[RMDB]
RNA sequence: GGGAACGACUCGAGUAGAGUCGAAAAGAUAUGGAGUGCGAACUACAGCGAAGUCAACAAUGAUGUCAAGCUAACGUCGGAAACGACGUUAGCUUGAUUGAGUUGCCGAGCUGCGCACUCCUAAGUCCAUAGCCAAAAUGUUCGCAUUUUGGCUAUGAAAAGAAACAACAACAACAAC
Reactivity to DMS in 0.01 (KOAc 150mM, MgCl2 10mM, bicine 150mM(pH8.5), 24C), signal-to-noise 6, nucleotides 027 to 126: g010a060u010a300u010g000g010a020g020u000g010c000g000a090a050c130u030a300c010a000g010c000g010a220a220g000u000c030a020a020c000a120a130u010g000a100u000g000u000c000a010a010g010c000u000a000a010c000g010u000c010g010g000a090a070a190c000g020a010c000g000u000u000a000g010c000u000u000g000a010u000u000g000a300g010u010u000g000c050c050g000a300g000c000u000g000c000g000c000a020c000u000c000c000u000a010a060g000u000c030
Reactivity to 2A3 in 0.01 (KOAc 150mM, MgCl2 10mM, bicine 150mM(pH8.5), 24C), signal-to-noise 3, nucleotides 027 to 126: g050a040u100a070u200g010g020a000g020u000g000c000g010a150a110c200u240a120c300a010g010c000g190a230a000g040u100c020a020a000c030a050a300u290g090a080u280g140u050c000a010a000g000c000u000a000a010c000g010u000c000g000g000a090a070a050c000g000a010c000g000u000u000a000g000c010u000u000g010a000u000u000g000a010g010u000u010g040c010c010g030a030g010c000u010g000c000g000c000a010c020u000c000c000u010a010a010g000u000c020